This 177-nucleotide RNA was probed chemically with DMS. For DMS, 2,916 sequencing reads were counted. The RNA was probed in 150 mM KOAc, 10 mM MgCl2 and 150 mM bicine (pH 8.5) at 24 C.
RNA sequence: GGGAACGACUCGAGUAGAGUCGAAAAGCCAGCAGCCGCGGUAAUACCAGCUCCAGUAGCGUCUGUGUUUAUUGCUGCGGUUAAAACGUGCGUAGUCGGCUAGUUGUGUGAAUAGUGAUUCGGGAUGACAGUACAAACAGUUCGCUGUUUGUACUGUAAAAGAAACAACAACAACAAC
Reactivity to DMS in 0.01 (KOAc 150mM, MgCl2 10mM, bicine 150mM(pH8.5), 24C), signal-to-noise 2, nucleotides 027 to 126: g020c020c010a150g030c100a130g000c000c010g020c010g010g010u000a020a030u010a040c050c010a050g000c050u000c060c110a190g020u010a130g010c100g010u020c010u000g010u010g020u020u010u000a010u010u000g020c000u000g000c010g020g010u010u000a040a050a070a110c130g000u010g010c050g030u000a090g000u010c070g010g010c020u000a080g000u000u000g020u010g010u030g000a050a080u010a060g020u000g000a170u000u000c050g010g000g010a130u010g000